[RMDB]
RNA sequence: GGGAACGACUCGAGUAGAGUCGAAAAGAGGCGAAAUAAUUCCCAUCUCCUUUGUACGGCCGGAGAUGGGUGUGGCCGUACUAAUAAGCCUCAUAGUGACGAGAGUCACGAAUUCUGGAUAGCCUAUGGUAGUCGGCUAUCCUUUGACUACCGUAGAAUCCAUAGGGACUUUCGAGUCCCUAUGGAUAAAAGAAACAACAACAACAAC
Reactivity to DMS in 0.01 (KOAc 150mM, MgCl2 10mM, bicine 150mM(pH8.5), 24C), signal-to-noise 1, nucleotides 027 to 156: g010a080g020g000c010g010a110a130a150u000a020a190u010u010c000c010c020a110u010c020u000c050c020u010u010u000g020u010a070c090g000g040c000c060g030g060a100g000a030u000g020g040g030u000g030u000g040g010c040c000g050u000a050c010u000a050a120u000a120a270g020c000c020u010c000a160u000a160g000u010g000a040c030g010a300g010a260g020u000c000a030c000g020a070a150u010u000c040u000g010g010a300u030a140g000c100c030u010a040u000g010g010u000a040g030u000c060g010g020c180u000a110u000c070c050u000u010u000g010a040c000u010a000c000c010g040u010a000g020a150
Reactivity to 2A3 in 0.01 (KOAc 150mM, MgCl2 10mM, bicine 150mM(pH8.5), 24C), signal-to-noise 2, nucleotides 027 to 156: g000a010g020g000c030g030a100a050a040u170a040a090u150u020c010c020c010a050u060c090u100c030c050u030u040u130g000u030a020c010g010g030c020c030g080g060a140g020a050u230g120g040g000u110g030u070g020g000c000c010g000u000a000c000u000a000a110u070a080a010g000c000c000u000c000a040u130a030g010u030g000a000c030g000a010g000a030g130u000c000a000c000g020a010a050u090u030c050u030g000g000a030u050a030g050c000c000u010a010u010g060g030u000a020g010u000c030g010g020c060u080a070u110c050c000u030u010u030g000a000c000u000a010c000c030g020u010a030g030a040
The record gives the reactivity of an RNA of 207 nucleotides to DMS and 2A3.
The reactions ran in a buffer of 150 mM KOAc, 10 mM MgCl2 and 150 mM bicine (pH 8.5), at 24 C.
The 2A3 profile rests on 1,216 reads.
Values cover nucleotides 27 to 156.
Reactivities are rounded to 0.1 and cut off at 0 and 3.
For 2A3 the reverse transcriptase was SuperScript II with manganese.